RNA sequence: GGGAACGACUCGAGUAGAGUCGAAAAAUGAGAUCCCAUCUUGCACACUGUGCUAAUUUGAGAUUCUCAUGCCUCCUACUUGGAGAGAUCUGUACUAGAAGUCAGGGCAUCUGACUCUGCCAGCCACAAAACGUACAAGGCUUCGGCCUUGUACGAACCAACAAAUAAAGUUCGCUUUAUUUGUUGGAAAAGAAACAACAACAACAAC
Reactivity to DMS in 0.01 (KOAc 150mM, MgCl2 10mM, bicine 150mM(pH8.5), 24C), signal-to-noise 3, nucleotides 027 to 156: a020u010g000a020g010a070u010c000c000c000a050u000c050u000u000g030c010a030c010a190c210u010g010u010g000c000u000a030a030u010u000u010g010a030g000a050u000u010c010u010c010a020u000g000c100c020u010c020c010u000a100c120u010u000g040g000a090g010a140g000a090u000c040u000g010u010a090c050u000a090g010a100a080g010u000c050a050g000g020g040c140a120u000c030u000g020a050c020u000c040u000g000c060c030a100g000c030c010a120c050a070a040a100a140c030g020u000a000c000a020a000g010g020c010u000u000c230g040g010c000c000u000u000g000u000a000c020g010a010a040
Reactivity to 2A3 in 0.01 (KOAc 150mM, MgCl2 10mM, bicine 150mM(pH8.5), 24C), signal-to-noise 9, nucleotides 027 to 156: a000u010g000a000g000a010u000c000c000c000a010u010c020u010u020g010c000a010c040a080c190u300g010u020g030c060u110a050a060u010u010u030g030a030g000a020u300u050c000u000c010a010u050g030c000c020u020c010c010u100a220c090u110u230g030g000a040g000a010g020a080u040c030u060g050u060a090c020u070a050g080a200a010g030u020c010a010g030g060g180c060a120u080c100u020g010a010c010u010c000u020g040c010c020a030g030c030c010a090c040a040a110a080a030c030g000u000a000c000a000a000g010g000c000u020u070c150g050g000c000c000u000u000g000u000a000c000g000a000a000

Description
Structure probing data (DMS and 2A3) for a 207-nucleotide construct. 2A3 adducts were read by reverse transcription with SuperScript II with manganese. The DMS profile rests on 6,430 reads. For DMS the reverse transcriptase was MarathonRT. For 2A3, 11,286 sequencing reads were counted.